[RMDB]
Structure probing data (DMS and 2A3) for a 207-nucleotide construct. Conditions: 150 mM KOAc, 10 mM MgCl2 and 150 mM bicine (pH 8.5), 24 C. For 2A3, 1,855 sequencing reads were counted. For DMS the reverse transcriptase was MarathonRT. Source: RMDB library M2RFPK, as collected in RNAgym.
RNA sequence: GGGAACGACUCGAGUAGAGUCGAAAAGUCGGAACAUAACGACGGCGGGCCGGUGGGGAAUCAGGGGGCUACCGUGGGAUAGCGAUGAGACAGCCCCCCCGAUGGCACCAAGCGUCGGAUCGCGGAAAACACUGUAAGCCCUUCGGGGCUUACAGAACAUAGAAUAUGAGUUCGCUCAUAUUCUAUGAAAAGAAACAACAACAACAAC
Reactivity to DMS in 0.01 (KOAc 150mM, MgCl2 10mM, bicine 150mM(pH8.5), 24C), signal-to-noise 1, nucleotides 027 to 156: g050u000c030g040g050a060a260c120a150u050a170a120c010g000a040c000g070g030c020g000g000g020c050c050g030g000u000g010g000g020g000a170a070u000c050a070g030g000g030g060g100c010u010a020c060c030g050u010g040g010g060a200u010a100g020c050g010a070u000g050a300g000a090c090a110g030c030c050c000c000c000c000c030g000a060u000g030g000c010a130c020c150a060a210g010c030g030u010c030g030g010a050u000c000g010c030g000g000a130a060a070a110c040a210c000u010g000u000a010a010g000c000c020c020u000u000c300g000g040g020g000c000u000u000a010c010a000g000a030a090
Reactivity to 2A3 in 0.01 (KOAc 150mM, MgCl2 10mM, bicine 150mM(pH8.5), 24C), signal-to-noise 3, nucleotides 027 to 156: g020u000c010g030g080a190a090c050a210u170a180a010c020g020a000c000g020g040c070g000g010g010c080c070g030g030u100g010g000g000g030a030a080u080c020a060g030g000g000g010g000c020u040a070c010c040g060u090g000g100g030a020u090a060g020c010g020a030u050g030a070g010a070c050a040g010c010c000c020c000c000c020c000g030a020u030g080g020c020a030c030c030a080a030g000c000g070u100c010g010g010a050u080c040g000c000g100g010a080a050a030a010c090a000c000u000g000u000a000a000g000c020c000c040u020u030c170g040g010g000g000c000u010u000a000c000a000g000a000a000